[RMDB]
RNA sequence: GGGAACGACUCGAGUAGAGUCGAAAAAAUUGCAGACACAGGCAUCAAGCACUAUGCGUGCAGCAACAACCAGGUAUAGUGAAAUAAUUAUUAAUUCGAUAGGUAUACCAGAGCGAUAUAAGCACAACAGAAUGAUCGUAUUUACAUACAAGACUGAGAUUAUGCACAAAUUCGUUUGUGCAUAAUCAAAAGAAACAACAACAACAAC
Reactivity to DMS in 0.01 (KOAc 150mM, MgCl2 10mM, bicine 150mM(pH8.5), 24C), signal-to-noise 3, nucleotides 027 to 156: a060a070u010u000g000c020a080g020a130c070a020c080a090g020g000c030a110u000c060a110a130g000c030a040c030u000a070u000g010c060g020u010g030c050a130g000c060a090a100c080a110a080c040c010a080g020g040u000a060u000a040g030u020g000a080a070a120u000a110a080u020u000a120u010u000a060a080u010u000c040g000a120u000a030g010g040u000a060u000a030c030c020a060g010a090g010c040g000a120u000a060u000a020a040g010c030a080c020a060a090c050a060g020a040a050u000g000a080u010c050g000u000a060u000u000u010a080c070a110u010a080c040a040a060g010a150c050u000g000a300
The data come from the RNA Mapping Database (RMDB), library OK3TST. An RNA of 207 nucleotides, treated with DMS and read out base by base. The RNA was probed in 150 mM KOAc, 10 mM MgCl2 and 150 mM bicine (pH 8.5) at 24 C. For DMS, 6,465 sequencing reads were counted.